[RMDB]
RNA sequence: GGGAACGACUCGAGUAGAGUCGAAAACGGAGGAGAAGAAAUCAACUGCGAGAUUCCCCGAGUAGCGGCGAGCGAAAGGGGACCGAUGGCCAAACCGGCGAGCGGGCGGGCGCCAGCCUAUACCGCCUUUUACUAAAACCUUCGGGUUUUAGUAAAAAAAAGAAACAACAACAACAAC
Reactivity to DMS in 0.01 (KOAc 150mM, MgCl2 10mM, bicine 150mM(pH8.5), 24C), signal-to-noise 5, nucleotides 027 to 126: c070g000g010a060g020g000a090g010a090a110g000a090a090a080u000c060a060a140c050u010g020c030g010a120g010a180u010u000c000c000c000c010g010a060g010u000a070g000c010g000g050c270g000a300g000c010g010a070a110a130g000g000g010g010a010c160c020g000a080u010g000g010c010c030a020a100a120c120c070g000g010c030g000a080g000c060g010g000g010c110g000g000g020c020g000c080c100a080g010c030c020u000a060u020a140c040c020g010c020c040
Reactivity to 2A3 in 0.01 (KOAc 150mM, MgCl2 10mM, bicine 150mM(pH8.5), 24C), signal-to-noise 5, nucleotides 027 to 126: c020g020g030a020g010g030a080g010a090a060g050a040a180a020u090c030a060a090c030u060g030c040g010a080g050a220u080u080c000c000c000c000g000a010g000u000a000g010c020g090g060c240g070a060g010c000g010a010a000a000g000g000g000g000a000c000c010g030a040u050g040g000c010c000a060a050a070c040c020g020g000c030g010a020g030c040g000g000g000c000g010g020g000c020g020c030c020a020g030c010c000u050a060u090a080c010c000g010c000c000